[RMDB]
RNA sequence: GGGAACGACUCGAGUAGAGUCGAAAACAUUACGAAUUCAGUCGCAAAUUGGAGAAUUAGCUACUCUACGAUUUAGUGAGCGUUAGUAACGUUGUAAUAUAAUAUAGUCUUUGGAAGGAUUAUAUUGGAGCCGCGGACAAGUUCGCUUGUCCGCGAAGCUCAUACGUGCGUUCGCGCACGUAUGAGCAAAAGAAACAACAACAACAAC
Reactivity to 2A3 in 0.01 (KOAc 150mM, MgCl2 10mM, bicine 150mM(pH8.5), 24C), signal-to-noise 1, nucleotides 027 to 156: c010a040u120u180a050c020g030a070a070u090u180c030a110g060u100c010g010c060a000a020a110u010u010g010g000a010g000a060a100u100u040a100g010c000u060a030c010u030c000u040a010c000g050a020u040u110u150a150g010u040g040a060g040c050g070u110u090a070g030u070a040a070c060g000u010u020g020u030a040a080u040a120u020a140a010u000a000u000a010g000u000c000u140u060u200g140g040a130a080g010g000a020u010u010a010u000a010u000u070g010g050a040g050c040c000g040c020g000g010a000c000a000a000g040u070u040c140g010c070u000u020g000u000c000c010g000c000g000a000a000